[RMDB]
RNA sequence: GGGAACGACUCGAGUAGAGUCGAAAAAGAGGGAUAGGCUUGGUUAUUGUGCUAGCCAUCAUGGCAAUAAUCGCUGCUGCAGGAGCUGGUCUCGGUGUCGCAAACGCCGUGCAGCAAUCCUAUACCAGUGUAGAAUCCUGUUCGCAGGAUUCUACACAAAAGAAACAACAACAACAAC
Reactivity to 2A3 in 0.01 (KOAc 150mM, MgCl2 10mM, bicine 150mM(pH8.5), 24C), signal-to-noise 6, nucleotides 027 to 126: a000g140a070g010g010g020a040u070a070g000g050c060u070u170g030g000u030u020a020u040u100g040u090g170c080u080a060g110c060c000a030u140c010a040u120g030g010c010a010a030u030a060a020u040c050g010c090u030g000c020u030g000c030a030g020g090a030g030c070u060g000g120u110c020u000c040g020g020u030g030u060c080g020c180a050a070a010c000g010c010c010g040u040g010c000a010g000c020a020a090u030c000c010u070a060u050a120c050c070a020
Reactivity to DMS in 0.01 (KOAc 150mM, MgCl2 10mM, bicine 150mM(pH8.5), 24C), signal-to-noise 3, nucleotides 027 to 126: a060g000a130g010g000g000a060u000a000g000g020c180u000u040g000g030u020u000a040u000u010g000u020g000c060u010a210g000c030c080a030u010c100a080u030g040g000c010a010a020u020a060a040u000c030g040c200u010g000c020u000g000c000a120g010g000a100g000c100u040g000g020u010c020u030c050g020g000u010g000u000c120g030c260a110a100a100c010g000c040c010g000u000g030c050a050g000c010a060a060u040c000c010u020a050u000a080c030c020a110